This 177-nucleotide RNA was probed chemically with DMS and 2A3.
Source: RMDB library OK1LIB, as collected in RNAgym.
The reactions ran in a buffer of 150 mM KOAc, 10 mM MgCl2 and 150 mM bicine (pH 8.5), at 24 C.
For 2A3 the reverse transcriptase was SuperScript II with manganese.
RNA sequence: GGGAACGACUCGAGUAGAGUCGAAAAGAAGAUGGGCGUGAUGAAAAUCAUGCGAAAGCUGUCUGAAAUAAAGGGCUUUGGAGGAAUAAAGGCAGCGGAACUCUUAGGCCGAAAUCCAUCGAAGAAAGGGUUAUAGUUACUUCGGUAACUAUAACCCAAAAGAAACAACAACAACAAC
Reactivity to DMS in 0.01 (KOAc 150mM, MgCl2 10mM, bicine 150mM(pH8.5), 24C), signal-to-noise 3, nucleotides 027 to 126: g010a070a150g010a010u000g000g000g000c000g050u000g000a000u000g000a190a110a130a030u000c020a010u000g040c020g020a090a070a060g000c000u000g000u030c010u000g020a090a160a080u020a050a100a080g010g000g010c000u010u020u000g000g010a010g040g030a140a070u010a030a130a170g000g000c000a000g020c020g030g020a080a080c020u000c020u000u020a040g010g010c000c020g020a080a050a040u080c000c010a030u000c010g000a100a120g020a080a070a200
Reactivity to 2A3 in 0.01 (KOAc 150mM, MgCl2 10mM, bicine 150mM(pH8.5), 24C), signal-to-noise 2, nucleotides 027 to 126: g080a060a000g000a010u010g000g000g000c000g040u000g000a000u010g060a060a030a000a060u000c000a010u010g000c000g030a020a070a000g010c000u000g000u020c000u010g180a050a000a000u200a020a120a030g070g000g000c000u020u030u020g020g010a000g030g080a150a060u220a240a030a030g000g000c000a000g020c070g040g100a070a090c000u000c030u000u000a040g010g000c030c010g030a050a000a030u040c030c030a000u000c010g020a090a040g020a060a050a030